Structure probing data (DMS and 2A3) for a 177-nucleotide construct.
It was measured as part of the RMDB library OK1LIB.
Conditions: 150 mM KOAc, 10 mM MgCl2 and 150 mM bicine (pH 8.5), 24 C.

RNA sequence: GGGAACGACUCGAGUAGAGUCGAAAAGAACAAAACAAACAAAAAGAAAAUGACCACUGUUUCACAGUUUCCGCUUUUUGGGCGGUGGAGCAGGCAAGGCCAUGCGGACAGCCGGGUCAAAUGCCGACGAGUAGUUGGACUUCGGUCCAGCUACUCGAAAAGAAACAACAACAACAAC
Reactivity to DMS in 0.01 (KOAc 150mM, MgCl2 10mM, bicine 150mM(pH8.5), 24C), signal-to-noise 6, nucleotides 027 to 126: g010a180a110c080a110a060a080a080c220a080a120a100c150a050a080a070a070a080g000a110a050a080a110u030g000a000c000c000a160c000u000g000u000u010u000c000a020c010a060g010u010u030u040c080c020g030c290u010u010u010u040u010g020g010g000c060g000g010u010g000g000a000g010c000a020g000g020c240a170a110g010g000c000c020a070u010g010c000g000g010a000c010a300g000c000c020g000g030g000u000c000a080a030a060u060g000c030c010g010a280
Reactivity to 2A3 in 0.01 (KOAc 150mM, MgCl2 10mM, bicine 150mM(pH8.5), 24C), signal-to-noise 9, nucleotides 027 to 126: g070a040a020c080a050a090a040a030c090a030a130a020c110a060a120a070a030a010g210a070a110a020a080u160g010a000c000c000a000c000u000g020u010u020u000c020a030c020a040g020u050u160u100c050c030g060c110u140u160u070u220u200g110g010g000c020g010g000u010g000g000a000g000c010a000g010g030c060a020a090g000g000c010c010a050u110g020c000g000g010a000c010a010g000c000c000g000g000g000u000c000a000a010a020u090g000c000c000g010a020